[RMDB]
RNA sequence: GGGAACGACUCGAGUAGAGUCGAAAACAGAAAGAGAGAGCUGUUAAAUCAGCAAGCGGCCAGACAACCGUCGGGAUAGAUCCACAGGUGAAGCGGAUUGAUUCCUCUGCUUUCAGCUACUAAAUCUGUUUUACUAGUUUUUCGAAACUAGUAAAACAAAAGAAACAACAACAACAAC
Reactivity to DMS in 0.01 (KOAc 150mM, MgCl2 10mM, bicine 150mM(pH8.5), 24C), signal-to-noise 3, nucleotides 027 to 126: c040a050g000a050a100a090g000a090g010a100g020a100g030c020u000g020u010u010a050a060a070u010c050a010g000c220a120a090g030c030g010g010c010c070a090g010a120c190a100a150c050c020g000u000c060g000g000g000a050u020a100g010a020u000c010c010a050c030a090g010g020u020g010a060a080g000c050g000g000a070u020u000g010a150u030u000c010c010u000c040u000g000c050u000u000u000c020a030g010c080u000a100c110u000a020a080a080u010c070u000
Reactivity to 2A3 in 0.01 (KOAc 150mM, MgCl2 10mM, bicine 150mM(pH8.5), 24C), signal-to-noise 9, nucleotides 027 to 126: c030a020g130a040a190a000g130a000g040a000g000a010g010c000u010g000u080u130a040a060a100u110c020a010g020c010a020a020g020c000g030g000c040c040a080g030a130c030a050a030c010c010g040u060c040g020g000g000a000u020a040g030a020u020c010c010a040c030a070g150g280u160g110a100a010g030c020g010g000a010u010u020g020a030u160u000c000c000u030c020u020g030c010u030u060u070c000a010g030c010u070a090c020u050a060a080a120u060c040u020
An RNA of 177 nucleotides, treated with DMS and 2A3 and read out base by base. Conditions: 150 mM KOAc, 10 mM MgCl2 and 150 mM bicine (pH 8.5), 24 C. For DMS the reverse transcriptase was MarathonRT.